[RMDB]
RNA sequence: GGGAACGACUCGAGUAGAGUCGAAAAGACAUAUUCGUAUGUCCUCGAAUCCUAAGUCAGUCCAGAGGCACAAAGGGAGCUAUGUCGGAAACGACAUAGCGAGGAUCUUUGUGAACUACCUCGACUGAUAUGGACCUUAACGAAGUUCGCUUCGUAACACAAUGCACGGUUUCGACCGUGCAUUGUGAAAAGAAACAACAACAACAAC
Reactivity to 2A3 in 0.01 (KOAc 150mM, MgCl2 10mM, bicine 150mM(pH8.5), 24C), signal-to-noise 1, nucleotides 027 to 156: g000a000c020a010u040a000u050u130c200g140u050a000u080g040u040c030c010u030c010g100a080a120u010c000c000u050a140a070g020u020c000a000g000u000c020c030a040g010a020g030g000c000a000c000a010a010a010g010g000g000a000g070c000u020a000u000g000u040c000g010g030a050a070a000c010g020a000c000a000u000a030g000c000g000a020g010g010a000u040c000u000u020u000g030u000g000a040a090c020u120a000c040c010u020c010g000a000c000u000g000a000u010a000u010g020g010a040c010c050u110u260a060a020c000g000a000a000g020u070u020c110g070c200u000u000c000g000u050a240a010